The record gives the reactivity of an RNA of 177 nucleotides to DMS and 2A3. The RNA was probed in 150 mM KOAc, 10 mM MgCl2 and 150 mM bicine (pH 8.5) at 24 C. It was measured as part of the RMDB library M2PK50.
RNA sequence: GGGAACGACUCGAGUAGAGUCGAAAAGAAGGUGUGUUCGCACACCUUCAAAUAGGUCAGACAAAAGCUUCCUGGAGUCAAGACCUGAAUACCAAAGGAGCAAAACCACCUACUUCGGUAGGUGGAACGAAUAUUAGUCCUUCGGGACUAAUAUUCGAAAAGAAACAACAACAACAAC
Reactivity to DMS in 0.01 (KOAc 150mM, MgCl2 10mM, bicine 150mM(pH8.5), 24C), signal-to-noise 3, nucleotides 027 to 126: g000a010a010g020g030u000g010u000g010u010u010c250g040c000a010c000a010c010c000u010u010c010a010a080a080u000a060g010g010u010c000a260g000a030c010a060a170a100a100g000c070u000u010c040c010u010g000g010a300g010u010c010a070a130g010a010c000c000u000g010a130a040u010a150c020c020a030a100a050g020g000a030g010c050a080a040a050a110c000c000a000c000c000u000a000c000u000u010c120g040g010u000a000g010g020u000g000g010a010a030
Reactivity to 2A3 in 0.01 (KOAc 150mM, MgCl2 10mM, bicine 150mM(pH8.5), 24C), signal-to-noise 3, nucleotides 027 to 126: g000a000a000g030g000u000g000u010g010u030u100c170g070c050a000c000a000c000c000u000u000c000a000a000a000u080a000g000g000u010c020a010g000a050c010a030a100a030a000g010c040u170u090c070c010u050g050g020a040g000u020c070a090a080g010a010c000c000u000g080a110a080u080a110c020c000a040a030a100g070g010a040g010c030a000a020a040a100c000c000a000c010c000u000a010c010u040u080c220g090g000u010a000g000g000u010g000g000a000a000